[RMDB]
Record summary
The record gives the reactivity of an RNA of 177 nucleotides to DMS. The reactions ran in a buffer of 150 mM KOAc, 10 mM MgCl2 and 150 mM bicine (pH 8.5), at 24 C. Values cover nucleotides 27 to 126.

RNA sequence: GGGAACGACUCGAGUAGAGUCGAAAAGUAAGGUCGCAUUCGCAGAUUCUAGGGUUAGGAUAUGAACGUGUUCCUUUGGGGGCCCACUACAGUGGGCUUCUCACCUUGGUGUCCUCAGGGGAGCCAGAAUCCCCGUACAGUUCGCUGUACGGGGAUUAAAAGAAACAACAACAACAAC
Reactivity to DMS in 0.01 (KOAc 150mM, MgCl2 10mM, bicine 150mM(pH8.5), 24C), signal-to-noise 2, nucleotides 027 to 126: g000u010a060a070g010g020u020c030g010c020a100u010u000c060g010c160a050g010a090u000u010c040u000a040g000g020g010u010u010a070g010g010a060u000a070u000g010a060a100c140g000u000g010u010u000c020c010u000u010u010g020g010g010g020g000c000c000c000a010c080u020a060c300a180g030u000g000g010g010c050u010u000c010u000c060a070c110c050u000u000g010g000u020g000u000c020c000u000c070a130g020g010g000g010a170g000c020c030a110g020